Structure probing data (DMS and 2A3) for a 177-nucleotide construct. The data come from the RNA Mapping Database (RMDB), library OK2TST. Conditions: 150 mM KOAc, 10 mM MgCl2 and 150 mM bicine (pH 8.5), 24 C. For 2A3, 4,843 sequencing reads were counted. Values cover nucleotides 27 to 126. For DMS the reverse transcriptase was MarathonRT.
RNA sequence: GGGAACGACUCGAGUAGAGUCGAAAAUGCGAGGCCGCGGCCGGACAGCCGAUGCCCGAACUGAUGUCGGAACUACUGUGGAGCCGCAUCGGGGCCCAGUGCGAUGCCACCAUCGCCCUAGACGUAGGCCUAUUAAAAUUUUCGAAUUUUAAUAGGCAAAAGAAACAACAACAACAAC
Reactivity to DMS in 0.01 (KOAc 150mM, MgCl2 10mM, bicine 150mM(pH8.5), 24C), signal-to-noise 7, nucleotides 027 to 126: u010g000c030g010a130g020g020c020c100g030c030g010g010c020c030g010g020a120c180a130g000c020c010g010a050u000g000c010c000c020g010a110a120c060u000g010a040u000g000u010c020g010g000a090a050c020u010a140c150u010g010u010g010g010a120g020c010c010g000c020a020u010c030g020g000g010g010c020c020c040a070g010u010g000c010g010a030u000g000c110c130a140c240c030a080u010c020g010c010c040c030u000a070g010a080c150g010u010a080g010
Reactivity to 2A3 in 0.01 (KOAc 150mM, MgCl2 10mM, bicine 150mM(pH8.5), 24C), signal-to-noise 4, nucleotides 027 to 126: u090g010c020g030a130g020g000c010c030g010c040g010g040c020c020g120g120a040c070a010g020c000c000g010a020u040g010c020c000c020g020a060a020c030u050g020a030u040g170u240c030g020g010a070a080c030u130a030c050u180g060u130g150g050a040g030c010c000g010c000a000u030c010g040g000g020g000c010c010c000a010g010u020g020c010g010a010u030g070c100c020a060c080c010a020u010c020g030c010c000c000u120a130g030a060c040g110u130a060g130